[RMDB]
RNA sequence: GGGAACGACUCGAGUAGAGUCGAAAACCAAUGGGAAACCAUUGGCAACUCGGAAACGAGUUGAACCGGUAAUUAGCCGAAAAUCCGGCGACAAUGCGAUUUUAAGCAUUGUCGAUUACGCCCAUGUCGAUUUUAAGACAUGGAGCGAAUUCGGCAAGGUUCGAUGUCCGUUCGCGGACGUUGAACCAAAAGAAACAACAACAACAAC
Reactivity to DMS in 0.01 (KOAc 150mM, MgCl2 10mM, bicine 150mM(pH8.5), 24C), signal-to-noise 3, nucleotides 027 to 156: c000c000a020a010u000g010g000g000a200a130a230c000c000a010u000u000g000g020c000a010a020c040u010c010g050g010a070a080a220c000g030a020g020u010u000g000a070a040c000c000g000g020u000a020a090u000u030a210g030c020c010g000a060a130a300a060u000c040c000g010g020c020g010a020c000a010a000u000g010c020g000a270u000u010u000u030a060a220g010c000a020u000u000g020u000c010g000a040u000u000a050c010g050c000c040c020a040u000g000u000c000g000a300u000u030u000u010a090a230g000a000c000a000u000g000g000a060g070c010g000a010a020u000u000c010g030g080c000a130a160
Reactivity to 2A3 in 0.01 (KOAc 150mM, MgCl2 10mM, bicine 150mM(pH8.5), 24C), signal-to-noise 7, nucleotides 027 to 156: c000c000a000a000u000g000g000g000a030a010a020c000c000a000u000u000g000g000c000a000a000c000u000c000g010g030a090a050a040c010g000a010g000u000u010g000a040a030c000c000g000g000u030a090a100u090u130a050g000c000c000g000a000a000a000a000u000c000c000g000g000c000g000a000c000a000a000u000g000c010g140a170u030u070u100u300a090a010g000c000a000u000u000g000u000c000g000a000u000u010a090c000g000c000c000c000a000u000g000u000c010g050a110u020u080u080u300a100a000g000a000c000a000u000g000g000a010g000c000g000a000a000u030u020c000g000g000c000a000a030
Source information: Chemical mapping of a 207-nucleotide RNA with DMS and 2A3. For DMS the reverse transcriptase was MarathonRT. The data come from the RNA Mapping Database (RMDB), library OK3TST. For 2A3, 14,080 sequencing reads were counted. For 2A3 the reverse transcriptase was SuperScript II with manganese. For DMS, 4,742 sequencing reads were counted. The RNA was probed in 150 mM KOAc, 10 mM MgCl2 and 150 mM bicine (pH 8.5) at 24 C.